[RMDB]
RNA sequence: GGGAACGACUCGAGUAGAGUCGAAAACUGGAAUACAGAAUUUUAAGGAAACGCUGUAUUAUCAGAACAAUGUCUUUAUGUCUGAAGCUAAAUGCUGGGUGGAAACCGAUCUGAAGAAAGGGCCACAAAACUAACAAGUUCGCUUGUUAGAAAAGAAACAACAACAACAAC
Reactivity to DMS in 0.01 (KOAc 150mM, MgCl2 10mM, bicine 150mM(pH8.5), 24C), signal-to-noise 7, nucleotides 027 to 129: c020u000g000g000a030a010u000a020c000a000g040a060a050u020u010u040u000a150a140g030g020a040a020a050c300g020c020u000g020u000a000u000u000a090u070c000a000g060a100a130c130a070a050u000g000u030c050u020u020u020a070u020g010u020c010u000g000a050a000g000c020u000a060a080a060u050g030c090u020g000g000g000u010g000g000a010a080a100c090c000g030a130u020c040u000g010a100a110g000a030a040a200g000g000g000c000c040a060c100a050a030a060a080
Reactivity to 2A3 in 0.01 (KOAc 150mM, MgCl2 10mM, bicine 150mM(pH8.5), 24C), signal-to-noise 4, nucleotides 027 to 129: c000u010g010g020a000a000u010a000c000a000g020a050a050u080u060u080u170a300a160g160g060a100a050a020c100g000c020u000g020u000a000u010u010a070u060c010a010g040a020a030c040a080a110u160g100u080c020u030u230u070a100u120g010u000c030u050g020a010a000g000c040u070a070a090a080u210g040c060u110g070g050g030u030g020g010a060a030a050c020c000g010a030u020c030u110g050a010a000g000a020a060a000g020g030g000c010c000a020c020a030a060a020a030